Overview: Chemical mapping of a 207-nucleotide RNA with 2A3 and DMS. For DMS the reverse transcriptase was MarathonRT. The DMS profile rests on 2,217 reads. Values cover nucleotides 27 to 156. The reactions ran in a buffer of 150 mM KOAc, 10 mM MgCl2 and 150 mM bicine (pH 8.5), at 24 C. High DMS reactivity at an A or C suggests that its Watson-Crick edge is free.
RNA sequence: GGGAACGACUCGAGUAGAGUCGAAAAGCUAUUCGUUCGCGAAUAGCAAAAAGCGUACUACAUGAGGUAUUCGUUCUUGGACCAGAUCCCAAAUAGGAUCUGCUAGAACAAUACUACCCACCAUGUAUCGCAAAAAAUAUCCCCUUCGGGGGAUAAAUGGGGAUGUAAUAUUCGUAUUACAUCCCCAAAAAGAAACAACAACAACAAC
Reactivity to 2A3 in 0.01 (KOAc 150mM, MgCl2 10mM, bicine 150mM(pH8.5), 24C), signal-to-noise 2, nucleotides 027 to 156: g000c000u030a000u070u000c000g020u010u100c120g000c010g190a000a000u010a000g000c000a030a020a000a000a000g050c020g030u090a050c050u000a000c030a000u030g000a020g000g010u000a000u000u090c130g020u030u020c000u020u060g050g010a060c060c020a000g000a000u010c000c010c020a090a300a120u230a080g010g010a000u000c010u020g050c010u000a020g000a000a000c030a010a000u010a020c000u030a080c000c030c010a030c000c000a000u000g000u020a040u220c030g060c060a140a000a000a000a000a000u300a000u300c000c010c010c010u000u090c230g030g030g060g010g010a000u170a010a060a100
Reactivity to DMS in 0.01 (KOAc 150mM, MgCl2 10mM, bicine 150mM(pH8.5), 24C), signal-to-noise 1, nucleotides 027 to 156: g020c000u000a050u000u000c000g030u000u010c300g000c000g060a010a020u000a000g030c010a000a030a080a080a040g000c030g030u010a110c110u000a030c010a040u000g030a100g030g010u000a030u010u000c160g000u000u000c000u010u030g120g000a140c280c000a000g020a030u000c000c010c010a030a150a260u010a100g000g030a010u000c000u030g000c000u010a040g030a020a000c000a030a030u020a040c010u010a040c010c020c020a300c090c000a000u000g000u000a030u000c010g010c020a000a000a160a080a090a160u010a030u000c000c010c010c010u000u000c300g060g010g020g030g000a000u000a000a170a090